[RMDB]
An RNA of 207 nucleotides, treated with DMS and 2A3 and read out base by base. Values are in units of 0.01, from 0 to 300, in steps of 10. The data come from the RNA Mapping Database (RMDB), library RNAMAK. 2A3 adducts were read by reverse transcription with SuperScript II with manganese. The reactions ran in a buffer of 150 mM KOAc, 10 mM MgCl2 and 150 mM bicine (pH 8.5), at 24 C.

RNA sequence: GGGAACGACUCGAGUAGAGUCGAAAAGAACCGCAGUUCGCUGCGGUUCAAAAACCUUUGUGACGCUGGUCGGGAGCAAGGGUUGCCCAUUGGGCAACAUCUUGCGAGGAUCGACCAAACGUCACUCUGGUAAAAGCAGUAUCUUUCGAGAUACUGCGUAUGACAAUUCUUUCGAGAAUUGUCAUACAAAAGAAACAACAACAACAAC
Reactivity to DMS in 0.01 (KOAc 150mM, MgCl2 10mM, bicine 150mM(pH8.5), 24C), signal-to-noise 2, nucleotides 027 to 156: g000a020a020c000c000g030c010a050g040u010u010c300g040c000u010g010c000g030g000u000u000c000a000a070a070a120a040c000c000u000u000u000g020u000g000a010c000g010c070u010g010g000u000c010g020g000g000a220g020c000a010a000g000g000g030u010u000g040c010c000c000a300u000u010g060g000g010c000a000a000c000a020u000c010u010u000g020c010g020a080g030g010a070u000c010g010a030c010c000a010a020a020c000g010u000c000a020c000u000c010u010g000g020u000a030a080a120a180g020c000a020g010u000a000u000c000u000u000u010c270g030a070g000a010u000a010c000u000g000c000
Reactivity to 2A3 in 0.01 (KOAc 150mM, MgCl2 10mM, bicine 150mM(pH8.5), 24C), signal-to-noise 3, nucleotides 027 to 156: g000a000a000c000c010g000c000a000g020u050u160c210g060c120u010g000c000g000g000u000u010c010a000a000a000a000a000c000c000u010u010u010g010u000g000a000c000g000c020u010g000g000u000c000g000g010g000a020g000c000a000a000g010g000g000u000u000g020c000c000c060a170u220u300g000g000g000c000a010a000c000a160u100c000u000u000g000c010g030a090g000g010a010u020c010g000a000c000c000a010a020a010c000g000u010c000a010c010u010c000u000g010g010u090a110a120a060a020g010c000a000g000u000a000u010c000u080u150u260c300g110a030g000a010u000a000c000u000g000c000